[RMDB]
RNA sequence: GGGAACGACUCGAGUAGAGUCGAAAAAUAUACGUAGAUUUGGUCAACAGCCUUAGCAGCUGCUAAGUGGUGUUGUACAUCACAAAUACCACAGAUUCUAGGUACAAUACGAGGUACUUCCUCAGCACAUUAUUAUCACCUUCGGGUGAUAAUAAUGAAAAGAAACAACAACAACAAC
Reactivity to DMS in 0.01 (KOAc 150mM, MgCl2 10mM, bicine 150mM(pH8.5), 24C), signal-to-noise 7, nucleotides 027 to 126: a090u040a100u010a030c100g010u000a040g010a050u010u010u010g000g000u000c040a070a060c130a070g010c010c010u010u010a030g030c060a240g030c170u040g030c020u000a020a040g020u010g020g000u000g020u000u000g000u000a110c110a090u030c110a080c060a030a070a040u010a050c010c030a070c120a100g010a040u000u000c020u000a020g000g010u020a030c190a080a090u020a080c090g010a030g000g010u020a180c280u000u010c000c010u010c040a100g010c160a180
Reactivity to 2A3 in 0.01 (KOAc 150mM, MgCl2 10mM, bicine 150mM(pH8.5), 24C), signal-to-noise 9, nucleotides 027 to 126: a000u170a010u020a050c100g050u050a040g030a120u060u060u150g070g010u060c010a020a010c000a060g130c000c000u010u020a010g000c050a030g070c070u300g000c010u030a020a020g020u050g110g100u000g010u010u020g040u070a020c020a040u100c040a010c020a040a080a030u120a050c010c010a030c040a080g060a060u080u070c030u100a030g090g010u100a080c070a090a090u090a130c080g010a010g030g040u070a140c040u140u120c010c000u050c020a020g080c040a010

Annotation:
The record gives the reactivity of an RNA of 177 nucleotides to DMS and 2A3. For DMS the reverse transcriptase was MarathonRT. High 2A3 reactivity points to a flexible backbone, as in loops and unpaired stretches. 2A3 adducts were read by reverse transcription with SuperScript II with manganese.